[RMDB]
RNA sequence: GGGAACGACUCGAGUAGAGUCGAAAAAGACCACCUCUACGGAGGUGGUUAAGUCACGUAGCUAGUACCAGGUUGCAAUACUAGAGCGUUAGUCCUGGGGCGUACGGUGGCAGUACGCUGCCACCGAUAAAACUUGAAUACUUCGGUAUUCAAGUAACGUAGGAUAGAUGUUCGCAUCUAUCCUACGAAAAGAAACAACAACAACAAC
Reactivity to DMS in 0.01 (KOAc 150mM, MgCl2 10mM, bicine 150mM(pH8.5), 24C), signal-to-noise 2, nucleotides 027 to 156: a150g020a020c010c000a010c010c000u010c030u000a090c220g080g000a040g010g000u000g000g000u000u000a030a050g010u010c040a110c050g010u000a090g040c010u000a010g000u000a070c050c000a080g010g000u000u000g080c040a110a040u000a010c010u010a010g010a300g020c010g010u010u000a060g000u020c000c000u010g020g010g010g020c110g030u000a040c000g030g050u010g030g020c000a020g030u000a050c220g020c030u000g000c000c000a000c020c000g020a020u000a020a040a090a110c000u000u000g000a030a030u000a010c000u000u010c300g040g000u000a000u000u000c000a010a010g020u020a000a080
Reactivity to 2A3 in 0.01 (KOAc 150mM, MgCl2 10mM, bicine 150mM(pH8.5), 24C), signal-to-noise 3, nucleotides 027 to 156: a000g030a000c000c000a000c020c000u000c010u020a060c290g100g000a010g020g000u000g010g000u000u000a010a000g010u030c020a010c050g010u040a030g130c000u000a000g010u030a170c010c010a000g000g000u030u010g000c010a010a000u000a020c000u000a000g000a000g030c080g110u140u170a010g020u090c000c000u010g010g000g010g020c120g080u210a070c010g000g020u000g000g000c000a000g000u020a020c260g010c060u000g010c000c000a000c000c000g000a000u010a000a050a010a010c000u000u000g000a000a000u000a000c000u010u050c200g070g000u010a000u000u000c000a000a000g000u000a030a010

Notes
The record gives the reactivity of an RNA of 207 nucleotides to DMS and 2A3. The data come from the RNA Mapping Database (RMDB), library M2RFPK. The DMS profile rests on 4,245 reads. Reactivities are given for positions 27 through 156.